[RMDB]
RNA sequence: GGGAACGACUCGAGUAGAGUCGAAAAGGGGUCUCGCUUUGAGGGAAGACCAUUUCUUGGAUUUAUGGAGCUGAAGCCUCCACGGCUCCAUUGUCAGAAAUGGUAUUCCCAAUGAUGAGCGAGACGGAGGCACCCAAAAUCCUACUUCGGUAGGAAAACACCAUAGAGGUUUCGACCUCUAUGGUGUAAAAGAAACAACAACAACAAC
Reactivity to DMS in 0.01 (KOAc 150mM, MgCl2 10mM, bicine 150mM(pH8.5), 24C), signal-to-noise 1, nucleotides 027 to 156: g040g010g040g010u000c000u000c000g050c010u000u010u000g000a050g040g010g020a020a010g010a030c000c000a050u000u000u000c000u010u020g040g020a090u000u000u010a040u010g000g050a090g010c010u000g000a090a170g050c060c030u010c010c030a300c020g000g020c050u000c010c000a020u000u010g010u000c010a110g010a000a010a010u010g010g070u000a030u010u000c010c000c000a010a060u000g030a270u010g000a030g020c020g010a010g000a010c040g010g030a040g110g050c020a110c010c010c000a130a090a040a130u010c000c000u000a020c000u000u010c250g030g020u000a000g010g000a010a090a160
Reactivity to 2A3 in 0.01 (KOAc 150mM, MgCl2 10mM, bicine 150mM(pH8.5), 24C), signal-to-noise 2, nucleotides 027 to 156: g070g010g020g010u010c000u000c000g000c000u010u000u000g010a000g000g010g000a000a000g020a000c000c000a000u030u000u000c030u170u300g100g000a050u110u130u070a000u050g010g000a000g000c000u020g020a120a000g000c000c000u010c020c000a020c000g020g000c010u020c010c000a000u000u020g020u070c140a080g020a000a000a000u000g010g000u010a020u010u000c010c000c000a010a030u000g000a000u000g010a000g000c000g000a000g000a000c000g000g000a000g010g000c000a030c000c000c000a020a130a000a070u010c010c000u000a010c000u040u060c300g080g000u010a010g000g000a070a040a000